[RMDB]
RNA sequence: GGGAACGACUCGAGUAGAGUCGAAAAGAUAUGGAUAAAGGCCAUGUGCGAAAGAACAACAGCCGUAUGUCGGAAACGACAUAACGGACAUGUUCUUUCGCACAUGGAACUACCUUUAUCCUAAGUCCCUAUGUACGUUGUUCGCAACGUACAUAGGAAAAGAAACAACAACAACAAC
Reactivity to 2A3 in 0.01 (KOAc 150mM, MgCl2 10mM, bicine 150mM(pH8.5), 24C), signal-to-noise 1, nucleotides 027 to 126: g070a080u240a130u300g040g000a000u010a000a020a000g000g030c000c000a000u020g000u040g030c040g010a010a000a000g010a030a000c040a000a040c080a190g160c000c010g000u000a010u010g010u020c000g020g040a140a080a070c010g000a010c020a010u040a190a120c040g000g030a000c000a010u010g000u010u010c010u000u000u020c000g000c000a000c000a010u000g010g000a000a000c000u010a000c010c000u030u000u000a000u010c000c000u000a100a010g050u080c000
Reactivity to DMS in 0.01 (KOAc 150mM, MgCl2 10mM, bicine 150mM(pH8.5), 24C), signal-to-noise 3, nucleotides 027 to 126: g020a090u000a300u010g010g010a030u010a000a000a000g000g000c000c010a010u000g000u010g000c010g010a000a000a020g000a030a010c020a030a150c300a230g020c020c000g040u010a010u000g000u000c000g030g010a120a110a220c010g000a020c000a000u020a050a030c000g030g000a040c120a110u000g000u000u000c000u000u010u000c000g010c000a000c000a000u000g000g000a040a020c080u010a300c010c000u000u000u000a010u000c000c000u000a050a100g010u010c030

Notes
This 177-nucleotide RNA was probed chemically with 2A3 and DMS. For DMS the reverse transcriptase was MarathonRT.